Chemical mapping of a 177-nucleotide RNA with 2A3 and DMS. For 2A3 the reverse transcriptase was SuperScript II with manganese. Source: RMDB library OK2TRN, as collected in RNAgym. Values cover nucleotides 27 to 126. The DMS profile rests on 6,631 reads. The RNA was probed in 150 mM KOAc, 10 mM MgCl2 and 150 mM bicine (pH 8.5) at 24 C.

RNA sequence: GGGAACGACUCGAGUAGAGUCGAAAACGACGCAUUGCUCGCCGACGCGGGUUCGGGAGUGGCCACCCUGGGCUUAUGUGACGACCCCCAGCGCCCGGCUUCGCCGCGCUCGCAAUCGUCACGGGGCAAGAGAUCCUAUUUUCGAAUAGGAUCUCUUAAAAGAAACAACAACAACAAC
Reactivity to 2A3 in 0.01 (KOAc 150mM, MgCl2 10mM, bicine 150mM(pH8.5), 24C), signal-to-noise 2, nucleotides 027 to 126: c000g130a020c070g000c070a080u050u270g030c020u020c040g120c030c050g080a050c020g110c060g070g040g010u070u130c040g010g040g020a040g090u050g060g020c000c010a040c050c010c050u040g100g010g000c080u170u130a180u300g060u030g030a050c080g110a070c000c030c000c000c010a010g030c020g050c060c070c000g000g050c000u220u150c090g040c010c000g050c010g000c020u040c050g060c000a040a020u020c000g010u020c000a010c010g000g000g000g020c020
Reactivity to DMS in 0.01 (KOAc 150mM, MgCl2 10mM, bicine 150mM(pH8.5), 24C), signal-to-noise 5, nucleotides 027 to 126: c110g000a090c090g020c110a080u010u000g000c020u000c060g010c050c020g000a080c100g010c100g000g000g020u000u000c060g010g000g010a090g010u000g000g000c030c040a120c060c040c030u000g010g020g000c060u000u010a040u020g020u000g010a030c030g000a110c050c040c030c050c060a120g010c090g000c070c110c050g020g010c040u010u000c220g020c020c020g010c110g010c010u000c110g010c080a120a100u000c020g010u000c010a070c030g000g010g000g020c300